RNA sequence: GGGAACGACUCGAGUAGAGUCGAAAACGAUCAGUACGUUCGCGUACUGAUCGAAGCUACUGGAGACAGUAGCAAGUCUAAGAUCUUGUUAGGCGGAAACAAGGAAAAAUGGAGGAAGGCCGGACCUCCAUACUUAGACAACCGCUAACAGGCCAAAUCCUAAAAUCACGUUCGCGUGAUUUUAGGAAAAAGAAACAACAACAACAAC
Reactivity to 2A3 in 0.01 (KOAc 150mM, MgCl2 10mM, bicine 150mM(pH8.5), 24C), signal-to-noise 1, nucleotides 027 to 156: c030g000a000u000c000a000g020u000a000c020g030u020u040c250g010c010g120u010a000c000u000g010a000u000c000g020a000a000g000c000u000a010c000u000g000g000a040g020a040c010a010g010u000a000g020c000a000a030g000u000c020u030a040a050g000a140u020c020u010u020g020u070u060a070g140g020c060g080g090a100a030a000c030a000a000g030g110a050a180a000a040a030u020g020g000a000g060g000a110a160g060g000c010c010g020g100a050c000c000u000c000c000a000u000a020c000u010u010a010g010a020c000a020a080c110c040g000c120u040a050a020c020a060g000g000c010c020a060a040a000